[RMDB]
RNA sequence: GGGAACGACUCGAGUAGAGUCGAAAAAUCACCGGUGGGGAACCCCAUACGGCAACGGCGUAGAAGUAAAUGCUAACCAAUCCGUGGUAUCUACGCGACGGAGCAUCCACGGAUCACUCUAACAAGGCUAAGCGUCUCGGUUUCGACCGAGACGCAACUUGGUAAUUAUGUUCGCAUAAUUACCAAGAAAAGAAACAACAACAACAAC
Reactivity to DMS in 0.01 (KOAc 150mM, MgCl2 10mM, bicine 150mM(pH8.5), 24C), signal-to-noise 1, nucleotides 027 to 156: a090u000c050a070c000c000g000g050u000g000g010g040g000a140a100c120c020c000c050a100u000a050c000g030g020c020a120a090c050g010g020c020g020u010a020g000a050a110g030u010a030a070a100u000g030c030u000a090a150c060c080a140a090u000c000c020g000u000g000g000u000a070u000c030u010a030c010g020c030g000a100c060g000g000a170g040c020a150u000c020c000a020c060g030g000a090u000c020a060c070u000c050u020a150a130c030a030a070g000g020c070u000a090a100g030c010g010u000c020u010c000g010g040u000u000u050c260g060a080c000c000g010a030g020a000c010g030c020a010a010
Reactivity to 2A3 in 0.01 (KOAc 150mM, MgCl2 10mM, bicine 150mM(pH8.5), 24C), signal-to-noise 2, nucleotides 027 to 156: a010u060c010a010c010c000g000g010u020g000g000g010g120a130a110c070c000c020c010a030u170a130c000g000g000c060a090a030c040g020g000c000g010u010a010g000a060a000g010u070a020a030a050u070g010c060u060a070a060c080c030a040a030u010c000c000g010u000g000g010u020a020u000c000u010a000c010g010c000g010a030c060g100g010a010g010c000a010u000c000c000a000c000g010g010a000u020c010a020c020u150c010u120a210a090c110a160a030g130g010c040u130a200a010g000c010g010u020c010u000c000g000g060u010u090u120c180g060a030c000c000g000a000g000a000c000g000c000a000a010
An RNA of 207 nucleotides, treated with DMS and 2A3 and read out base by base. Conditions: 150 mM KOAc, 10 mM MgCl2 and 150 mM bicine (pH 8.5), 24 C.